[RMDB]
An RNA of 207 nucleotides, treated with 2A3 and read out base by base. Source: RMDB library OK3TST, as collected in RNAgym. The RNA was probed in 150 mM KOAc, 10 mM MgCl2 and 150 mM bicine (pH 8.5) at 24 C. Values are in units of 0.01, from 0 to 300, in steps of 10. Reactivities are given for positions 27 through 156.
RNA sequence: GGGAACGACUCGAGUAGAGUCGAAAACGCUUACCGUCACCUCAUCGCCGGGCUGGCCGGUUUCGGGCGCUGUCACGUCGGCGAUGGUGAACGUCGCCGGCUCUUCGACGGUCACCGUCGUCUCCGCCGUCUCGUUUUCGGUCGACACGGUAAGCGGUACACUUUAGGGGUUCGCCCCUAAAGUGUAAAAAGAAACAACAACAACAAC
Reactivity to 2A3 in 0.01 (KOAc 150mM, MgCl2 10mM, bicine 150mM(pH8.5), 24C), signal-to-noise 2, nucleotides 027 to 156: c010g010c020u000u000a000c010c010g010u020c050a070c070c010u050c020a220u150c080g090c120c070g060g040g000c100u040g020g010c020c010g020g050u030u030u050c000g010g010g000c030g070c090u080g040u170c080a050c170g030u040c030g050g000c010g000a000u000g010g020u020g030a040a020c030g000u010c010g010c040c050g130g080c060u000c040u070u070c030g000a000c000g020g010u060c020a020c020c030g010u020c010g030u010c030u030c020c010g010c030c030g010u020c070u030c030g000u000u010u040u060c000g000g050u020c040g030a080c020a000c110g010g010u000a000a000g000c000g000g000